An RNA of 207 nucleotides, treated with 2A3 and DMS and read out base by base. For 2A3 the reverse transcriptase was SuperScript II with manganese. 2A3 is a SHAPE reagent: it acylates the 2'-hydroxyl of flexible nucleotides of all four kinds.
RNA sequence: GGGAACGACUCGAGUAGAGUCGAAAAGGUAUUGGUGGUCAGCGUACCAUUAAGAUAUCAACAGUGCAGUCCAAACUUACUGAUGUUAAGUGUACCAAUGUGGUUCUAAUGGGCUGUUUGUCUAGCAUGAACAUUCAGGCUAACUCUGCUGAGUGGACUAAAUCAGCUUCUUCGGAAGCUGAUUUAGAAAAGAAACAACAACAACAAC
Reactivity to 2A3 in 0.01 (KOAc 150mM, MgCl2 10mM, bicine 150mM(pH8.5), 24C), signal-to-noise 5, nucleotides 027 to 156: g010g010u030a010u050u080g050g030u020g010g000u030c060a110g090c100g120u190a030c010c010a010u040u060a090a030g020a060u050a000u040c030a020a040c020a050g090u030g090c010a000g010u000c020c020a060a080a030c020u050u070a020c030u160g230a170u230g070u110u050a030a010g030u020g050u090a020c020c000a100a160u300g060u250g130g000u050u020c050u110a150a140u060g000g000g020c020u010g010u020u030u020g030u000c030u010a030g020c020a060u070g040a050a050c020a050u080u060c050a020g010g050c030u040a030a040c040u020c050u090g010c010u010g010a010g060u070g010g020a020
Reactivity to DMS in 0.01 (KOAc 150mM, MgCl2 10mM, bicine 150mM(pH8.5), 24C), signal-to-noise 3, nucleotides 027 to 156: g020g010u000a030u000u010g000g040u010g000g010u010c050a220g060c210g030u000a100c020c010a020u000u000a060a110g020a040u000a050u000c020a090a090c060a120g030u000g020c020a040g020u000c010c020a050a180a060c030u000u010a050c060u010g020a210u010g030u000u000a020a050g030u000g030u000a070c030c010a060a130u000g020u010g040g020u000u000c060u000a080a130u000g020g010g020c020u010g020u000u020u000g010u000c020u010a070g000c080a060u030g000a100a120c140a130u000u000c020a050g010g020c020u000a050a100c050u000c060u000g000c000u000g010a090g010u000g020g000a210
For DMS the reverse transcriptase was MarathonRT.